RNA sequence: GGGAACGACUCGAGUAGAGUCGAAAAGAUAUGGAGCCAAACAAGCCUUGGAUUUAUAGGCGAGAUGAGUCAUAUGUCGGAAACGACAUAUGACUGAGCCUAUUGUCAGGCUUGUGGCUCCUAAGUCGAGUUGUAGUAUCUUCGGAUACUACAACUCAAAAGAAACAACAACAACAAC
Reactivity to DMS in 0.01 (KOAc 150mM, MgCl2 10mM, bicine 150mM(pH8.5), 24C), signal-to-noise 2, nucleotides 027 to 126: g000a110u010a300u000g000g020a020g000c000c020a060a160a150c000a010a010g010c010c000u000u020g030g020a010u000u000u000a050u000a000g000g010c000g030a200g000a160u010g000a070g010u000c000a010u000a010u000g000u000c010g000g000a070a090a230c000g000a010c000a000u000a000u000g010a000c000u000g020a200g010c000c010u000a020u000u000g010u000c010a080g020g010c010u000u020g020u000g000g010c000u000c010c000u010a010a110g010u010c070
Reactivity to 2A3 in 0.01 (KOAc 150mM, MgCl2 10mM, bicine 150mM(pH8.5), 24C), signal-to-noise 2, nucleotides 027 to 126: g090a020u150a080u250g010g000a010g000c010c000a210a300a170c000a090a000g000c000c030u220u300g200g000a020u080u300u090a040u070a040g020g000c180g000a040g040a090u300g180a020g020u010c020a000u000a000u000g010u000c020g000g030a070a060a030c000g010a000c000a010u000a000u010g000a000c000u010g010a010g000c000c000u010a000u000u020g030u020c070a030g000g000c000u010u000g000u010g010g020c000u000c010c000u010a030a010g070u070c100